This 207-nucleotide RNA was probed chemically with 2A3. The RNA was probed in 150 mM KOAc, 10 mM MgCl2 and 150 mM bicine (pH 8.5) at 24 C. Source: RMDB library OK3TST, as collected in RNAgym.

RNA sequence: GGGAACGACUCGAGUAGAGUCGAAAAUCAAAUCUUUCAUGUUUCCAGGAAAUACCAAGACUAGCUAUUGGACCUGGCUCAAAGAUCGUACCUACGACGAUACGGCGACAUACCGCACGCGCCCCGCGAAGACCAUGUACGAAAAGGUGCUCAGCUAGCCUCCAAGUGUAUUCGUACACUUGGAGGCAAAAGAAACAACAACAACAAC
Reactivity to 2A3 in 0.01 (KOAc 150mM, MgCl2 10mM, bicine 150mM(pH8.5), 24C), signal-to-noise 1, nucleotides 027 to 156: u100c010a000a050a050u030c070u050u140u070c030a040u250g050u020u160u010c000c000a000g000g120a130a070a020u190a140c000c000a020a000g110a080c000u020a000g030c020u020a090u070u070g000g030a040c000c000u000g090g000c000u020c020a060a060a010g030a010u040c000g040u040a080c010c010u060a050c020g070a020c010g010a050u040a140c010g020g000c000g000a020c000a080u140a040c000c060g050c060a050c050g070c000g030c000c000c000c000g000c000g070a050a000g020a000c040c000a030u060g030u050a030c010g040a050a050a000a000g040g070u000g010c030u000c020a030g000c010u030a020